[RMDB]
Overview
This 177-nucleotide RNA was probed chemically with DMS and 2A3. Conditions: 150 mM KOAc, 10 mM MgCl2 and 150 mM bicine (pH 8.5), 24 C. Source: RMDB library TTRDEL, as collected in RNAgym. The 2A3 profile rests on 11,843 reads.

RNA sequence: GGGAACGACUCGAGUAGAGUCGAAAAGAUAUGGAGGAGCCAGGAGCAUGCAAAAUCGGAAACGAUGAAGUAUAUGCGCGAAACUGGGCUCCUCCUAAGUCAAAACCCACUGCUUCGGCAGUGGGAAGAUAGACUAGUACUUCGGUACUAGUCUAUCAAAAGAAACAACAACAACAAC
Reactivity to DMS in 0.01 (KOAc 150mM, MgCl2 10mM, bicine 150mM(pH8.5), 24C), signal-to-noise 5, nucleotides 027 to 126: g010a020u000a050u010g000g000a020g000g010a010g010c000c000a010g000g010a050g030c010a020u000g000c220a060a070a220a010u000c000g010g000a030a010a040c000g020a010u000g000a100a190g010u000a130u020a050u000g010c030g040c200g000a060a060a090c010u000g000g010g000c000u000c000c000u010c010c000u000a000a050g000u000c010a080a060a120a170c000c000c000a000c010u000g000c000u000u010c210g020g000c000a010g020u000g000g020g010a010a010
Reactivity to 2A3 in 0.01 (KOAc 150mM, MgCl2 10mM, bicine 150mM(pH8.5), 24C), signal-to-noise 5, nucleotides 027 to 126: g000a000u000a000u050g000g000a010g020g000a010g010c000c010a020g000g030a060g000c000a010u080g010c020a050a100a080a120u010c000g000g010a010a000a000c010g010a010u020g020a140a020g080u150a260u050a030u300g020c030g000c080g150a170a070a000c010u080g050g200g020c000u000c000c000u000c000c000u000a000a000g000u010c000a010a030a050a100c010c000c000a000c000u000g000c000u030u100c250g130g000c000a000g000u000g000g010g000a000a000